This 307-nucleotide RNA was probed chemically with 2A3. The 2A3 profile rests on 1,909 reads. Values are in units of 0.01, from 0 to 300, in steps of 10. Reactivities are given for positions 27 through 266.
[RMDB]
RNA sequence: GGGAACGACUCGAGUAGAGUCGAAAACCUUCUAACUACGGUUAGAAGGACCGGCAAUCGUGAGAUUGCCGGAACAUGUUGCUACGGCAACAUGACUUGUUCUCUUCGGAGAACAAGAGGCAUAACUACGGUUAUGCCAGCGUCGCUACGGCGACGCAAGGCAUAAGCUUCGGCUUAUGCCAACGCAAGCUACGGCUUGCGAAUAGGAGAGUCAGGGCCAGGACCCCCCCCCCUGAGCCCAGGAUAACCUUAAGAAUAGGGGGGCUACACGCGAAUUCGUUCGCGUGAAAAGAAACAACAACAACAAC
Reactivity to 2A3 in 0.01 (KOAc 150mM, MgCl2 10mM, bicine 150mM(pH8.5), 24C), signal-to-noise 2, nucleotides 027 to 266: c000c000u010u000c000u010a000a000c000u010a020c160g100g000u000u010a010g010a000a010g000g010a040c010c000g000g000c030a010a000u010c010g040u050g040a070g010a030u000u000g000c010c000g000g000a000a010c000a000u000g000u010u010g000c010u020a120c300g120g000c000a010a000c000a000u010g070a050c000u000u000g000u000u000c000u000c000u030u040c270g150g000a000g000a000a000c000a000a000g090a040g000g010c000a010u000a000a000c000u020a010c260g120g000u000u000a000u000g000c010c000a010g020c060g000u000c010g020c020u060a060c300g160g000c020g000a000c000g020c010a030a080g010g030c010a010u000a010a000g000c010u000u130c280g080g000c000u000u020a000u020g000c010c000a000a000c000g000c000a000a000g000c000u030a020c250g140g000c000u000u010g000c000g000a020a130u210a040g020g040a080g010a040g070u070c110a090g010g010g010c020c040a030g000g020a120c000c000c000c000c000c010c000c000c000c000u020g010a010g000c030c040c040a040g030g010a020u120a080a130c020c010u080u120a150a010g080a110a050u090a140g000g000g000g000g000g000c000u010a020